[RMDB]
RNA sequence: GGGAACGACUCGAGUAGAGUCGAAAAUUCGACUUUAGUGUAGUUACUGUUUCGUCGGCUUAACCGCCGAUCCACUACAUGCAAGGGGCAGCCGGGCUGUGAGGCAGCUGCCAGGAUGGUCCUGCCCGAGUGCUAUACUUUUCGAAGUAUAGCACUCAAAAGAAACAACAACAACAAC
Reactivity to 2A3 in 0.01 (KOAc 150mM, MgCl2 10mM, bicine 150mM(pH8.5), 24C), signal-to-noise 9, nucleotides 027 to 126: u080u040c030g030a010c020u060u080u110a050g000u020g010u010a020g010u040u110a100c080u110g040u050u060u060c040g000u000c000g000g000c010u060u070a050a040c020c020g000c000c000g000a000u010c020c020a020c000u010a000c000a020u040g050c050a070a080g050g000g030g000c000a000g010c010c030g150g090g000c020u040g040u080g100a110g140g000c010a010g010c020u040g030c030c010a020g020g010a040u080g040g080u020c010c010u030g030c010c010c000
Reactivity to DMS in 0.01 (KOAc 150mM, MgCl2 10mM, bicine 150mM(pH8.5), 24C), signal-to-noise 6, nucleotides 027 to 126: u010u000c070g000a130c030u010u020u010a170g030u000g000u010a000g000u000u020a100c200u020g010u010u010u000c090g000u000c010g000g000c020u010u000a100a130c300c200g000c000c010g010a010u000c080c070a030c010u000a000c020a020u000g000c220a080a100g000g000g000g010c010a020g000c010c060g010g010g000c020u000g010u040g000a160g000g020c020a110g000c020u010g010c020c010a060g000g000a080u000g010g000u000c050c050u000g010c030c050c060

Description
Structure probing data (2A3 and DMS) for a 177-nucleotide construct. For 2A3 the reverse transcriptase was SuperScript II with manganese. The RNA was probed in 150 mM KOAc, 10 mM MgCl2 and 150 mM bicine (pH 8.5) at 24 C.